[RMDB]
RNA sequence: GGGAACGACUCGAGUAGAGUCGAAAAGAUAUGGAGUCAGGGAGGGAGCACCUCGGAAACGAGUGUGCGAAGAACUCCUGACUCCUAAGUCAAAAGAACUUCUACCUCUUCGGAGGUAGAAGUUCAAGUAUGUAAUGCAGUUCGCUGCAUUACAUACAAAAGAAACAACAACAACAAC
Reactivity to 2A3 in 0.01 (KOAc 150mM, MgCl2 10mM, bicine 150mM(pH8.5), 24C), signal-to-noise 3, nucleotides 027 to 126: g010a000u060a030u120g010g010a000g000u000c030a020g090g180g070a260g050g030g000a020g010c000a010c000c000u010c000g010g030a060a040a020c000g000a000g020u300g000u000g040c010g010a090a030g010a010a010c000u000c010c000u000g000a000c000u010c010c000u000a010a000g000u000c010a010a010a030a180g010a000a000c000u000u010c000u000a010c010c010u010c020u070u100c300g080g010a000g000g030u010a000g000a000a010g000u000u000c000a000a000